[RMDB]
RNA sequence: GGGAACGACUCGAGUAGAGUCGAAAAGAUCCUGGACAACAGAGGCAGAGUUGUGGCUAUUGUUCUAGGAGGUGCAAAUGAGGGCACGCGUACGGCGCUUUCAGUGGUCACUUGGAACCAGAAAGGGCCUCCAUAGACGGUUCGCCGUCUAUGGAGGAAAAGAAACAACAACAACAAC
Reactivity to DMS in 0.01 (KOAc 150mM, MgCl2 10mM, bicine 150mM(pH8.5), 24C), signal-to-noise 1, nucleotides 027 to 126: g000a130u000c030c000u000g000g010a070c030a010a040c100a050g030a130g010g000c020a030g030a140g000u010u020g040u000g000g020c000u000a060u000u010g000u000u000c010u010a040g010g000a050g000g010u000g010c040a040a080a110u000g010a060g010g020g010c040a030c050g010c160g000u010a000c260g020g020c050g000c050u000u000u000c020a100g030u030g020g000u000c050a150c170u020u000g020g000a070a040c030c040a190g000a010a030a030g020g000g000

This 177-nucleotide RNA was probed chemically with DMS. Reactivities are rounded to 0.1 and cut off at 0 and 3. The RNA was probed in 150 mM KOAc, 10 mM MgCl2 and 150 mM bicine (pH 8.5) at 24 C.